[RMDB]
RNA sequence: GGGAACGACUCGAGUAGAGUCGAAAACGAGCAGGUUGUCCAUCUUCUCUGACUCGCUGUCAAUGUUAACAGCACUGCAGACAGGCCCCCUAGCCGUAACGGACCCAAUUCUGAGACGACUAUGGAGUCGCGUCCGCGUGUUCGCACGCGGACGCGAAAAAGAAACAACAACAACAAC
Reactivity to 2A3 in 0.01 (KOAc 150mM, MgCl2 10mM, bicine 150mM(pH8.5), 24C), signal-to-noise 1, nucleotides 027 to 126: c170g000a000g000c000a000g000g050u120u050g140u080c060c070a180u120c030u090u240c220u100c010u050g150a300c000u000c020g080c000u000g110u070c040a130a130u160g160u260u220a090a000c000a000g000c110a000c010u040g000c000a000g100a050c070a040g240g020c000c000c000c000c060u000a000g010c000c040g000u000a080a080c100g000g020a000c000c000c000a000a120u270u070c000u000g090a120g000a050c010g000a000c000u000a030u120g100g000a020g080
An RNA of 177 nucleotides, treated with 2A3 and read out base by base. The reactions ran in a buffer of 150 mM KOAc, 10 mM MgCl2 and 150 mM bicine (pH 8.5), at 24 C. As a SHAPE reagent, 2A3 marks flexible, mostly unpaired nucleotides at the ribose 2'-OH.